RNA sequence: GGGAACGACUCGAGUAGAGUCGAAAAGAACGAAACUUCGGUUUCGUUCAAAUAAUGCGUAGCUCGCGCUACGCAGGCAACGAGUAGGUCGAGCCACCUACAAAAGAUUUUAGUUCGCUAAAAUCAACCAUUCAAUGGGGUUCGCCCCAUUGAAUGGAAAAGAAACAACAACAACAAC
Reactivity to 2A3 in 0.01 (KOAc 150mM, MgCl2 10mM, bicine 150mM(pH8.5), 24C), signal-to-noise 1, nucleotides 027 to 126: g000a000a000c000g000a000a000a000c000u050u120c190g020g040u000u000u000c010g010u000u020c000a000a000a000u080a020a060u050g000c000g000u010a000g010c040u060c160g100c020g030c060u000a010c010g000c010a000g000g020c020a000a080c030g010a050g110u040a000g000g060u010c010g060a020g060c130c050a010c010c000u030a010c010a010a120a000a020g010a000u020u020u010u010a000g020u020u060c250g070c070u010a010a000a000a000u000c020a020a070
Reactivity to DMS in 0.01 (KOAc 150mM, MgCl2 10mM, bicine 150mM(pH8.5), 24C), signal-to-noise 1, nucleotides 027 to 126: g000a020a010c000g000a000a000a000c000u010u040c170g050g000u000u000u000c000g000u000u000c010a030a120a070u000a120a070u000g040c000g040u000a000g010c000u000c290g000c300g000c010u000a010c020g000c010a000g010g000c070a050a040c040g030a120g000u000a000g010g010u000c070g000a130g000c070c090a090c010c000u000a000c030a060a130a090a110g000a010u000u000u000u000a020g000u000u000c230g020c010u000a030a000a020a000u000c000a080a170

An RNA of 177 nucleotides, treated with 2A3 and DMS and read out base by base. Source: RMDB library M2PK50, as collected in RNAgym.